Source: RMDB library TTRDES, as collected in RNAgym. Chemical mapping of a 177-nucleotide RNA with DMS and 2A3. The DMS profile rests on 3,049 reads. The RNA was probed in 150 mM KOAc, 10 mM MgCl2 and 150 mM bicine (pH 8.5) at 24 C.

[RMDB]
RNA sequence: GGGAACGACUCGAGUAGAGUCGAAAAGAUAUGGACUCCACUGUAGGGAGCUCAAGUGUCGGAAACGACACGAAGAGCGAGGAUCUAUUGGAGUCCUAAGUCAAAAGAUCAUCGUUCGCGAUGAUCACCAUAGAUUUUGCUUCGGCAAAAUCUAUGGAAAAGAAACAACAACAACAAC
Reactivity to DMS in 0.01 (KOAc 150mM, MgCl2 10mM, bicine 150mM(pH8.5), 24C), signal-to-noise 3, nucleotides 027 to 126: g000a020u000a030u010g000g000a020c000u000c000c010a190c300u000g010u000a020g000g010g000a010g040c000u000c000a050a300g010u000g020u000c000g010g010a020a000a050c000g000a020c000a000c000g010a140a130g000a010g030c000g010a050g000g000a010u010c000u000a030u000u000g030g000a000g030u000c000c000u000a000a060g000u000c030a080a070a170a120g000a020u000c010a000u000c000g000u000u020c240g010c000g010a010u000g000a010u000c000a090
Reactivity to 2A3 in 0.01 (KOAc 150mM, MgCl2 10mM, bicine 150mM(pH8.5), 24C), signal-to-noise 3, nucleotides 027 to 126: g010a000u020a010u070g000g000a000c000u000c000c000a000c070u110g080u090a000g010g040g010a050g040c010u010c010a100a130g020u000g020u020c010g000g050a020a000a010c000g000a000c020a000c030g020a240a070g000a000g020c020g050a220g000g050a030u000c010u010a040u080u230g010g010a000g000u000c000c000u000a010a000g000u020c010a000a000a100a180g000a000u000c000a010u020c010g060u080u070c300g010c010g170a010u000g000a000u010c010a020